[RMDB]
This 177-nucleotide RNA was probed chemically with DMS and 2A3. Reactivities are given for positions 27 through 126. 2A3 is a SHAPE reagent: it acylates the 2'-hydroxyl of flexible nucleotides of all four kinds.
RNA sequence: GGGAACGACUCGAGUAGAGUCGAAAAAAGAUAUGGACCUUGCUACCCACCGUCAAGAUGAGGGCGUUGAAACGAAAUCGGAAACGAUUUCGUGGAGCCUUGAGACGAGGCAAGGUCCUAAGUCAAACUUACCAUACAAGUUCGCUUGUAUGGUAAGAAAAGAAACAACAACAACAAC
Reactivity to DMS in 0.01 (KOAc 150mM, MgCl2 10mM, bicine 150mM(pH8.5), 24C), signal-to-noise 7, nucleotides 027 to 126: a110a120g010a050u010a100u010g000g000a010c010c010u010u000g000c000u000a130c060c030c060a300c060c020g000u000c020a070a260g010a300u000g020a120g000g000g010c000g010u010u020g000a150a140a010c000g000a000a000a000u000c000g010g000a070a040a130c000g030a010u000u000u000c000g000u000g000g000a080g010c000c000u000u000g010a170g000a010c010g000a130g010g000c000a000a000g010g000u000c000c000u000a000a080g000u010c050a080a100a180
Reactivity to 2A3 in 0.01 (KOAc 150mM, MgCl2 10mM, bicine 150mM(pH8.5), 24C), signal-to-noise 6, nucleotides 027 to 126: a000a020g090a050u090a060u090g000g000a000c010c000u030u030g010c010u120a240c020c070c040a040c020c000g010u000c020a060a060g110a300u300g300a250g120g050g010c040g210u300u040g000a010a010a010c000g000a000a000a010u000c010g010g000a030a010a010c000g000a000u000u000u000c000g010u000g000g000a010g000c000c000u010u020g020a020g000a010c000g000a000g000g010c010a000a010g010g000u020c000c000u000a000a000g010u010c010a000a010a050